[RMDB]
This 177-nucleotide RNA was probed chemically with DMS and 2A3. DMS adducts were read by reverse transcription with MarathonRT. The RNA was probed in 150 mM KOAc, 10 mM MgCl2 and 150 mM bicine (pH 8.5) at 24 C. Source: RMDB library OK1LIB, as collected in RNAgym. For 2A3 the reverse transcriptase was SuperScript II with manganese. In probing experiments dimethyl sulfate is read out at A N1 and C N3, which are open when not base-paired.
RNA sequence: GGGAACGACUCGAGUAGAGUCGAAAACAGGCGUCGAUUACCCGCCAGGACGACACCGGUAAUCAGCAGCUUUAUCAGAUUGGGAAUAUUUUUCACAGAUUGGGUAUCAUACCGGGAGCGGAACAGCAAUAAUGAUAAAUUUCGAUUUAUCAUUAUUAAAAGAAACAACAACAACAAC
Reactivity to DMS in 0.01 (KOAc 150mM, MgCl2 10mM, bicine 150mM(pH8.5), 24C), signal-to-noise 9, nucleotides 027 to 126: c080a120g000g010c020g010u020c070g010a080u020u010a050c040c020c030g000c050c030a100g010g010a080c100g000a080c090a090c080c050g000g000u000a030a050u020c050a120g020c080a080g010c030u010u010u020a080u020c060a070g000a070u020u010g010g000g000a060a070u020a070u010u020u010u010u010c040a050c090a060g010a090u020u010g000g000g010u000a060u030c080a100u020a070c060c020g000g000g000a080g010c040g000g010a050a100c170a090g010c120
Reactivity to 2A3 in 0.01 (KOAc 150mM, MgCl2 10mM, bicine 150mM(pH8.5), 24C), signal-to-noise 9, nucleotides 027 to 126: c050a040g030g010c010g020u080c080g040a080u030u110a080c000c010c000g010c030c020a040g070g050a040c080g010a010c020a050c070c020g010g010u030a050a050u060c020a010g060c020a010g010c020u090u090u100a090u110c030a040g060a300u080u120g030g010g050a070a030u090a200u140u140u030u060u070c070a090c010a060g080a100u060u090g030g000g020u090a080u150c040a030u060a100c010c010g020g010g000a020g030c020g010g050a060a030c020a030g080c020